[RMDB]
RNA sequence: GGGAACGACUCGAGUAGAGUCGAAAAGAUAUGGAAGACGAAGAACAUGUCCCACGAUGAAAUCGAAUCUAGGAGUCGGAAACGACUCCUAGAUUCGAUGGAGUGGGCAUGGGAGUCUUCCUAAGUCCAUGAUGAGAUAGUUCGCUAUCUCAUCAUGAAAAGAAACAACAACAACAAC
Reactivity to DMS in 0.01 (KOAc 150mM, MgCl2 10mM, bicine 150mM(pH8.5), 24C), signal-to-noise 4, nucleotides 027 to 126: g000a080u010a300u010g010g010a020a010g010a030c020g010a170a200g020a110a200c000a010u000g000u020c000c000c000a020c010g010a140u020g000a120a140a010u000c000g010a020a010u000c000u000a010g010g010a040g010u000c000g000g000a090a090a170c010g010a010c000u010c010c000u010a000g000a000u000u000c000g010a000u000g000g010a070g020u000g000g010g010c000a000u010g010g010g010a190g020u000c000u000u000c000c000u010a010a100g010u000c060

An RNA of 177 nucleotides, treated with DMS and read out base by base. Reactivities are given for positions 27 through 126. Source: RMDB library TTRINS, as collected in RNAgym.